[RMDB]
RNA sequence: GGGAACGACUCGAGUAGAGUCGAAAAUACAGAAGCAACAUUUAACUUCUUGUUAGAUUUGGCAGGAUUGUUCAGAAUCUUUCUCCGCAAUGCCUAUGUGUACACUUCACAAGGGUUUGUGGUGGUCCGUGCAGUAUAUCUUCGGAUAUACUGCACGAAAAGAAACAACAACAACAAC
Reactivity to 2A3 in 0.01 (KOAc 150mM, MgCl2 10mM, bicine 150mM(pH8.5), 24C), signal-to-noise 2, nucleotides 027 to 126: u130a010c040a010g070a080a000g020c080a020a080c030a090u120u100u050a070a030c010u030u050c010u090u070g000u050u050a040g010a150u040u030u020g100g070c050a050g000g210a190u080u090g050u000u160c060a030g050a060a020u040c000u000u080u020c050u000c000c040g000c000a030a020u140g050c010c000u050a100u060g090u030g000u040a020c190a080c260u070u010c030a030c040a100a180g030g000g040u020u000u010g020u010g010g000u020g010g000u030c060
Reactivity to DMS in 0.01 (KOAc 150mM, MgCl2 10mM, bicine 150mM(pH8.5), 24C), signal-to-noise 3, nucleotides 027 to 126: u010a090c100a040g040a070a030g030c060a090a110c200a110u000u000u010a090a120c020u000u020c080u010u000g010u000u010a010g000a070u000u010u000g000g030c000a050g030g010a070u000u000g020u000u010c070a100g010a080a030u000c020u000u000u000c000u000c000c030g030c020a010a020u020g070c010c010u000a170u000g040u010g030u000a120c300a070c200u010u010c010a000c020a040a300g000g010g020u000u010u010g010u000g010g010u000g000g000u000c090